[RMDB]
The record gives the reactivity of an RNA of 177 nucleotides to DMS and 2A3.

RNA sequence: GGGAACGACUCGAGUAGAGUCGAAAAGCUUUACUGUUCGCAGUAAAGCAAAGAGUCGGUGGCCGGACCGGCCGGACCAAAAUACAAAAACAAAAAGAAAAAAAACAAUCUAGUUCGCUAGAUUGAACUACGAAUGUAUGUUCGCAUACAUUCGUAGAAAAGAAACAACAACAACAAC
Reactivity to DMS in 0.01 (KOAc 150mM, MgCl2 10mM, bicine 150mM(pH8.5), 24C), signal-to-noise 1, nucleotides 027 to 126: g010c000u000u010u000a000c000u010g010u020u000c090g000c000a000g010u000a000a000a000g020c010a090a050a110g050a240g010u000c060g020g000u000g000g010c030c030g000g000a120c060c040g000g000c020c030g000g000a150c050c060a060a040a060a120u030a130c100a050a030a070a110a050c070a080a100a060a110a140g010a050a000a010a070a050a010a060a220c020a000a000u000c000u000a000g020u000u010c150g030c010u000a010g000a050u010u000g000a100a140
Reactivity to 2A3 in 0.01 (KOAc 150mM, MgCl2 10mM, bicine 150mM(pH8.5), 24C), signal-to-noise 2, nucleotides 027 to 126: g000c000u000u000u010a000c000u000g020u040u070c190g010c100a010g000u010a010a000a000g000c000a000a080a000g040a020g000u010c020g010g110u040g030g170c070c090g050g120a040c030c030g000g000c000c000g040g040a020c030c020a020a060a040a050u240a100c060a020a110a000a100a010c080a040a090a040a060a060g120a090a040a020a030a000a000a000a020c000a000a000u020c010u000a000g010u010u070c170g050c110u000a000g000a020u010u000g030a030a020
It was measured as part of the RMDB library M2PK50.